[RMDB]
RNA sequence: GGGAACGACUCGAGUAGAGUCGAAAAACGCCUGAGUGUACGCACUCAGGCGAAUCAGACUCCGCUCCGGACAAAUGAACCGAUGAAGCAUUGUUCGGAGCAGCUAGGUAUCUACGGAUACCUAGCAGCUAUAUUUGGCGUUCGCGCCAAAUAUAGCAAAAGAAACAACAACAACAAC
Reactivity to 2A3 in 0.01 (KOAc 150mM, MgCl2 10mM, bicine 150mM(pH8.5), 24C), signal-to-noise 9, nucleotides 027 to 126: a000c010g000c010c000u000g000a020g000u020g010u030a060c260g020c090a000c000u000c000a000g000g000c000g000a000a000u050c000a010g080a080c040u020c040c050g000c010u000c000c000g010g000a000c010a040a190a080u040g030a070a090c090c120g120a170u250g120a130a010g040c010a010u000u000g000u000u000c000g000g000a000g000c000a000g000c000u000a000g000g000u000a000u000c000u010a030c240g110g000a000u000a000c000c000u000a000g000c000a000
Reactivity to DMS in 0.01 (KOAc 150mM, MgCl2 10mM, bicine 150mM(pH8.5), 24C), signal-to-noise 2, nucleotides 027 to 126: a140c000g030c010c000u000g000a020g070u000g060u020a100c200g010c010a010c010u000c000a000g000g010c020g000a020a010u010c170a160g010a150c060u020c040c110g000c000u000c000c000g000g030a000c010a010a050a020u000g020a050a110c060c230g010a130u100g000a130a050g000c000a000u000u010g020u000u000c000g000g000a000g000c030a000g010c000u000a000g010g000u000a000u010c000u000a140c160g030g000a020u000a000c000c000u000a000g010c000a020